The record gives the reactivity of an RNA of 177 nucleotides to 2A3. 2A3 adducts were read by reverse transcription with SuperScript II with manganese. The 2A3 profile rests on 384 reads. The data come from the RNA Mapping Database (RMDB), library OK1LIB. Conditions: 150 mM KOAc, 10 mM MgCl2 and 150 mM bicine (pH 8.5), 24 C. Values cover nucleotides 27 to 126.
RNA sequence: GGGAACGACUCGAGUAGAGUCGAAAACCGAGAUCGUGGGUGACGAAAAUCAUUGCGGCACCGGUCUCGGCCUGCAGUUCUCGCAUUAGCCGGAGGAUCUGUGCCUGGGUCGUGACGUCGAGGGCGGCGCCCGUCCGUGCUUCGGCACGGACGGGCGAAAAGAAACAACAACAACAAC
Reactivity to 2A3 in 0.01 (KOAc 150mM, MgCl2 10mM, bicine 150mM(pH8.5), 24C), signal-to-noise 1, nucleotides 027 to 126: c000c000g010a010g000a000u050c140g010u190g000g260g000u000g030a020c000g100a010a150a170a060u140c110a280u000u300g140c030g000g040c000a000c010c000g000g000u000c000u010c000g070g000c000c000u060g000c050a020g030u130u000c050u180c050g010c030a090u060u280a120g070c120c090g090g190a140g170g000a130u140c070u000g040u060g000c000c030u060g100g000g000u070c040g000u080g000a070c000g000u050c000g090a000g000g050g010c000g000g020